[RMDB]
RNA sequence: GGGAACGACUCGAGUAGAGUCGAAAACGGCGAGGUCGAGCACGAGGGCAUCCUGCUUGCCGUCGUACAGACGCAGCGCGCGACCGAUCAUCUGCGAGUACAGGUUGCGGCUGCGGGUGGGCCGGGCAGGUGCUGUGAAAUUCGUUUCACAGCACCUAAAAGAAACAACAACAACAAC
Reactivity to DMS in 0.01 (KOAc 150mM, MgCl2 10mM, bicine 150mM(pH8.5), 24C), signal-to-noise 3, nucleotides 027 to 126: c040g000g000c050g020a120g000g020u000c020g010a080g020c050a010c160g000a050g020g010g010c120a090u000c050c090u000g000c080u000u000g030c030c020g000u000c010g020u000a080c110a140g000a100c040g020c010a020g000c000g020c020g020c010g010a010c000c000g000a080u000c100a110u010c130u000g020c170g000a060g030u020a120c120a210g000g010u000u000g000c000g000g000c000u000g020c010g000g010g020u000g010g010g000c090c030g000g010g000c190
Reactivity to 2A3 in 0.01 (KOAc 150mM, MgCl2 10mM, bicine 150mM(pH8.5), 24C), signal-to-noise 3, nucleotides 027 to 126: c020g010g020c040g050a080g000g150u220c040g020a010g020c030a010c040g020a040g060g120g020c070a080u070c020c010u050g010c040u030u010g020c020c010g110u000c000g000u030a040c030a040g100a010c020g000c000a010g000c060g010c000g000c000g040a010c000c010g040a050u030c030a040u050c090u250g160c110g090a050g070u140a120c070a110g020g000u010u010g010c000g000g000c010u020g010c010g010g010g000u150g000g000g040c080c050g030g040g000c020
This 177-nucleotide RNA was probed chemically with DMS and 2A3. DMS adducts were read by reverse transcription with MarathonRT. For DMS, 4,144 sequencing reads were counted. The reactions ran in a buffer of 150 mM KOAc, 10 mM MgCl2 and 150 mM bicine (pH 8.5), at 24 C. For 2A3 the reverse transcriptase was SuperScript II with manganese.